RNA sequence: GGGAACGACUCGAGUAGAGUCGAAAAGAUCCACAGAGGAGAGUGAGGGGUGGGGUGCCGCCCACCCCAAAGCACAACCAACUCAGCAAUGCAGAUUCUAUUUUGUGGGUAAUGGCCCUGGGAUUGGGCAGUGGAAAGGGCCCAUAUGAGCAUUGACCGUAUAGUACAAGUUCGCUUGUACUAUACGAAAAGAAACAACAACAACAAC
Reactivity to 2A3 in 0.01 (KOAc 150mM, MgCl2 10mM, bicine 150mM(pH8.5), 24C), signal-to-noise 4, nucleotides 027 to 156: g030a040u030c000c000a010c030a030g060a040g060g020a020g000a040g060u090g020a060g000g000g050g000u010g000g030g000g030u140g060c030c030g070c000c040c010a000c020c030c000c000a030a020a000g000c010a000c010a000a070c050c010a020a080c030u050c080a010g020c010a030a030u040g040c000a010g070a180u140u090c040u080a080u090u220u100u090g030u040g010g000g030u040a040a100u100g070g010c000c010c020u050g050g000g070a080u040u160g020g010g000c020a020g060u090g060g080a070a080a070g020g020g010c010c000c010a040u080a060u090g030a030g000c030a040u040u090g030a060c040
Reactivity to DMS in 0.01 (KOAc 150mM, MgCl2 10mM, bicine 150mM(pH8.5), 24C), signal-to-noise 2, nucleotides 027 to 156: g000a080u010c020c020a070c030a120g010a160g030g020a050g000a130g040u000g010a220g000g000g030g100u010g000g020g030g000u000g030c100c130g020c040c000c010a010c010c000c000c020a020a010a080g000c030a080c010a080a140c040c030a080a120c070u000c060a060g020c050a050a110u000g020c040a170g010a100u000u000c070u010a120u010u000u000u010g050u010g010g020g030u000a050a080u010g010g030c020c000c010u000g000g010g000a170u000u000g010g030g010c080a070g020u000g000g020a110a160a050g000g020g030c010c000c030a060u020a020u010g010a100g020c070a100u000u000g020a140c120